[RMDB]
RNA sequence: GGGAACGACUCGAGUAGAGUCGAAAAGAUAUGGAUACACCAUUCAGGCUUAGAUCUUGGGUCGGAAACGACCCAAGCCAGCCUGAUGGCUGUAUCCUAAGUCAAAACUGUACGUUCGCGUACAGAACUUCCUUACUUUGUUCGCAAAGUAAGGAAGAAAAGAAACAACAACAACAAC
Reactivity to DMS in 0.01 (KOAc 150mM, MgCl2 10mM, bicine 150mM(pH8.5), 24C), signal-to-noise 4, nucleotides 027 to 126: g000a050u010a300u030g000g000a020u000a000c010a040c010c000a020u010u010c000a020g010g000c010u010u010a160g010a020u010c010u000u000g010g010g020u000c000g000g000a090a110a260c010g010a020c000c000c000a000a000g010c160c070a030g010c020c000u000g000a010u000g000g000c300u000g010u000a010u000c000c000u000a020a120g000u000c040a120a090a080a250c000u000g000u010a010c010g030u010u010c280g020c020g030u000a000c000a010g000a090a160
Reactivity to 2A3 in 0.01 (KOAc 150mM, MgCl2 10mM, bicine 150mM(pH8.5), 24C), signal-to-noise 4, nucleotides 027 to 126: g030a030u090a020u190g000g010a000u000a010c000a020c010c010a030u230u300c020a020g010g040c020u120u250a040g030a210u150c000u020u020g030g000g000u010c020g020g030a050a040a050c030g000a000c000c000c000a000a000g010c000c010a010g020c000c000u000g000a000u000g000g000c020u000g010u000a000u000c000c000u000a080a010g040u000c020a010a030a160a220c010u020g000u010a000c010g020u030u110c300g000c010g210u000a000c000a000g010a030a030

The record gives the reactivity of an RNA of 177 nucleotides to DMS and 2A3. The reactions ran in a buffer of 150 mM KOAc, 10 mM MgCl2 and 150 mM bicine (pH 8.5), at 24 C. DMS adducts were read by reverse transcription with MarathonRT. The 2A3 profile rests on 10,881 reads. It was measured as part of the RMDB library TTRDES.